[RMDB]
RNA sequence: GGGAACGACUCGAGUAGAGUCGAAAACUUCUGGGUCUCUGAAUAUCCUGCAGAUCCAUAUGCAUACGACCAGUAUCCUCCUGUAGCUGGAUUGAAGAAUUCUCCUGGUCUUGUGCUGGAGGUGGAAGAGGGUAAUAGUGUUCGCACUAUUACCCUCAAAAGAAACAACAACAACAAC
Reactivity to 2A3 in 0.01 (KOAc 150mM, MgCl2 10mM, bicine 150mM(pH8.5), 24C), signal-to-noise 2, nucleotides 027 to 126: c000u070u030c020u000g000g010g040u020c020u000c000u020g180a300a090u220a180u270c030c040u000g090c050a020g000a060u070c010c000a050u050a010u190g010c010a010u000a060c030g010a010c010c010a020g010u060a090u080c010c000u000c000c060u180g050u100a040g050c150u110g030g010a040u000u130g140a140a090g080a120a040u190u000c060u020c070c020u000g000g000u000c020u000u070g010u020g010c020u060g080g010a020g050g000u090g030g050a130a070
Reactivity to DMS in 0.01 (KOAc 150mM, MgCl2 10mM, bicine 150mM(pH8.5), 24C), signal-to-noise 2, nucleotides 027 to 126: c050u000u000c040u000g010g010g040u000c010u000c050u000g000a150a160u010a160u000c130c040u000g000c130a040g010a030u010c010c000a070u010a050u000g040c020a010u010a040c060g010a010c010c000a030g020u010a110u000c090c060u000c090c030u010g000u000a090g030c100u000g000g020a100u000u000g010a110a070g000a090a180u010u010c060u000c070c000u000g000g000u000c010u000u000g020u000g010c010u000g010g010a070g010g010u010g000g010a090a150
The data come from the RNA Mapping Database (RMDB), library OK2TST. Chemical mapping of a 177-nucleotide RNA with 2A3 and DMS. As a SHAPE reagent, 2A3 marks flexible, mostly unpaired nucleotides at the ribose 2'-OH. The RNA was probed in 150 mM KOAc, 10 mM MgCl2 and 150 mM bicine (pH 8.5) at 24 C. For 2A3, 982 sequencing reads were counted. For 2A3 the reverse transcriptase was SuperScript II with manganese.